[RMDB]
RNA sequence: GGGAACGACUCGAGUAGAGUCGAAAAGGAACACCGCUAAAUCUCGGGCGUGGUAGCGCCAACCUUCCUGCUGUUUAUAGGAGCUGUCAUGCUCUUCAUCAAUAAUGAUAACGCCCAGCCGAGAGAACGCCAUAAUUGAUUUCGAUCAAUUAUGGCGAAAAGAAACAACAACAACAAC
Reactivity to 2A3 in 0.01 (KOAc 150mM, MgCl2 10mM, bicine 150mM(pH8.5), 24C), signal-to-noise 2, nucleotides 027 to 126: g050g010a140a020c050a020c050c000g000c050u060a050a140a150u020c040u010c010g060g000g000c040g050u060g020g040u020a010g010c010g040c010c020a050a040c020c020u040u040c000c020u050g060c030u080g110u200u100u040a220u090a060g040g000a000g000c000u040g210u300c020a030u150g010c000u000c000u030u020c020a060u010c020a000a100u150a170a070u120g120a050u050a140a010c030g000c000c000c040a020g020c040c040g050a050g040a010g050a070a010
Reactivity to DMS in 0.01 (KOAc 150mM, MgCl2 10mM, bicine 150mM(pH8.5), 24C), signal-to-noise 3, nucleotides 027 to 126: g010g010a090a060c160a170c300c020g050c030u000a040a060a110u000c020u000c070g000g010g000c040g030u000g010g010u000a030g010c040g030c020c030a090a090c050c020u000u000c020c020u000g000c120u010g020u010u010u000a130u010a080g000g000a030g000c000u000g000u000c130a090u010g010c010u010c010u000u000c050a050u020c090a030a040u000a070a090u010g000a080u000a060a090c080g010c020c010c010a140g000c060c080g020a060g010a090g000a090a220